[RMDB]
RNA sequence: GGGAACGACUCGAGUAGAGUCGAAAACUACUGUAGAGCCCAUGCCCCAGAGCAAACCUACCACUAGUGAAGCACCACCUAGUCAAAAUAAUCACAACGAAAAUAACAUGUAUGAUGCUUCAACAGACACAGGUGCACAAUUCGUUGUGCACCUGUGAAAAGAAACAACAACAACAAC
Reactivity to DMS in 0.01 (KOAc 150mM, MgCl2 10mM, bicine 150mM(pH8.5), 24C), signal-to-noise 1, nucleotides 027 to 126: c010u000a030c040u020g070u030a100g010a160g080c000c040c040a120u010g010c030c070c020c020a030g000a020g000c040a000a030a140c120c010u010a100c140c010a110c090u000a100g000u000g000a080a090g030c030a050c000c020a050c220c010u000a120g010u000c090a020a070a120a050u000a120a120u000c020a000c090a030a040c110g000a050a050a110a100u000a080a030c010a150u000g000u000a140u000g010a090u000g000c000u000u000c050a100a030c150a140g000a190
Reactivity to 2A3 in 0.01 (KOAc 150mM, MgCl2 10mM, bicine 150mM(pH8.5), 24C), signal-to-noise 1, nucleotides 027 to 126: c020u080a030c030u150g060u100a020g020a030g050c000c020c010a040u070g010c000c030c000c020a040g040a020g090c010a090a020a040c020c040u050a070c000c000a050c030u030a020g030u000g080a060a000g000c030a010c030c000a030c010c000u080a030g070u070c030a040a000a140a100u180a010a090u160c040a010c010a060a050c050g130a030a060a090a050u140a100a000c030a030u110g050u090a120u030g020a020u010g010c000u040u050c020a100a050c050a080g080a030